[RMDB]
RNA sequence: GGGAACGACUCGAGUAGAGUCGAAAAAUACUUCUCAGGAUGGCGCGUUGCAGUCCAACAAGAUCCAGGGACUGUACAGAAUUUUCCUAUACCUCGAGUCGGGUUUGGAACCUAAGGUUGACUCGCUAAAACUUUACGUGGUUCGCCACGUAAAGAAUCAUAUCAGGUAGUUCGCUACCUGAUAUGAAAAAGAAACAACAACAACAAC
Reactivity to DMS in 0.01 (KOAc 150mM, MgCl2 10mM, bicine 150mM(pH8.5), 24C), signal-to-noise 3, nucleotides 027 to 156: a080u010a040c070u000u000c040u000c030a160g010g010a070u000g010g010c110g010c150g010u000u020g020c020a100g020u000c020c010a070a170c040a060a270g010a080u000c060c020a190g000g010g010a040c050u000g000u000a110c050a110g000a110a120u000u000u000u000c040c000u010a150u000a080c070c020u000c010g010a030g030u010c040g030g000g020u010u000u000g010g010a080a060c020c030u000a100a110g010g010u000u000g000a080c050u000c010g020c080u030a050a110a150a120c010u000u000u000a010c000g050u000g020g000u000u000c300g030c010c000a020c000g050u000a000a000a020g000a040a080
Reactivity to 2A3 in 0.01 (KOAc 150mM, MgCl2 10mM, bicine 150mM(pH8.5), 24C), signal-to-noise 3, nucleotides 027 to 156: a000u140a040c020u040u020c030u010c030a030g030g030a050u060g060g030c030g000c070g140u120u040g000c010a000g010u000c010c000a040a040c050a080a170g110a150u100c070c060a060g000g040g000a000c000u010g000u030a020c010a030g110a150a090u070u050u050u000c010c000u050a050u060a140c010c020u000c040g010a010g000u000c020g000g020g000u070u100u080g090g020a030a030c000c020u030a070a070g130g020u050u070g020a030c010u010c050g000c050u080a070a070a050a070c000u000u010u000a000c000g000u000g000g040u030u030c100g010c050c000a000c000g000u000a000a000a000g000a000a040